[RMDB]
RNA sequence: GGGAACGACUCGAGUAGAGUCGAAAAGAUAUGGACCGUGCCAGAACGUCAUGACAGGAACUACGCUCGUGGGUCGGAAACGACCCACCGGCGCCUGUCAUGACGUUCGGUAAUUCGGUCCUAAGUCGGAACGUACAAAGUUCGCUUUGUACGUUCCAAAAGAAACAACAACAACAAC
Reactivity to DMS in 0.01 (KOAc 150mM, MgCl2 10mM, bicine 150mM(pH8.5), 24C), signal-to-noise 1, nucleotides 027 to 126: g020a130u000a300u000g000g000a000c030c030g060u000g000c050c040a190g060a000a000c010g020u010c000a000u000g000a000c000a000g000g000a200a030c140u020a300c030g020c020u000c300g050u000g020g000g030u000c000g000g000a060a160a290c020g000a030c020c010c000a000c000c060g000g030c030g000c000c010u000g000u000c010a010u000g000a000c000g000u000u000c020g000g010u000a020a150u000u010c030g000g060u000c000c000u000a000a040g000u000c110